An RNA of 207 nucleotides, treated with 2A3 and DMS and read out base by base.
As a SHAPE reagent, 2A3 marks flexible, mostly unpaired nucleotides at the ribose 2'-OH.
For DMS the reverse transcriptase was MarathonRT.

RNA sequence: GGGAACGACUCGAGUAGAGUCGAAAAGAGAGAAAGAAAGCUGACCCUUCUGCUGACGGAUCUUGUGGAGCACCACAGUGCAGAAGGGGAGAGAAGCUUUAAUGCCGACCGUCUGGGCAGCCUUGAAAAAACGGAUUCUUCUUCGGAAGAAUCCGAACUGUGUUAUACCGUUCGCGGUAUAACACAGAAAAGAAACAACAACAACAAC
Reactivity to 2A3 in 0.01 (KOAc 150mM, MgCl2 10mM, bicine 150mM(pH8.5), 24C), signal-to-noise 2, nucleotides 027 to 156: g050a000g000a010g020a060a060a020g060a030a010a020g040c050u070g100a110c020c000c000u000u020c010u000g040c030u050g030a070c040g070g000a090u100c080u140u080g030u020g010g050a080g100c110a100c100c000a000c010a050g050u040g040c000a000g000a000a000g000g000g000g000a000g000a010g000a010a010g000c000u050u050u050a070a030u080g000c000c040g010a060c000c020g020u000c020u080g030g000g030c010a020g040c010c010u070u130g020a090a050a010a030a050a000c000g000g000a010u000u010c000u000u000c000u000u040c140g080g000a000a000g000a000a000u000c000c000g000a010a000
Reactivity to DMS in 0.01 (KOAc 150mM, MgCl2 10mM, bicine 150mM(pH8.5), 24C), signal-to-noise 2, nucleotides 027 to 156: g010a170g000a020g020a150a110a040g000a020a040a060g050c000u000g000a090c020c020c020u000u000c020u000g010c030u000g000a220c020g030g000a100u000c000u010u000g010u010g030g030a250g010c150a150c020c020a020c000a090g010u000g040c010a020g000a040a010g000g020g020g000a050g020a120g000a160a070g030c000u020u000u000a060a050u000g020c000c010g030a080c000c060g020u010c080u010g030g030g000c010a080g010c060c060u010u000g000a000a160a120a050a070a240c020g020g020a020u000u000c000u010u000c000u000u010c300g010g000a020a010g010a030a000u000c000c000g000a000a010
The reactions ran in a buffer of 150 mM KOAc, 10 mM MgCl2 and 150 mM bicine (pH 8.5), at 24 C.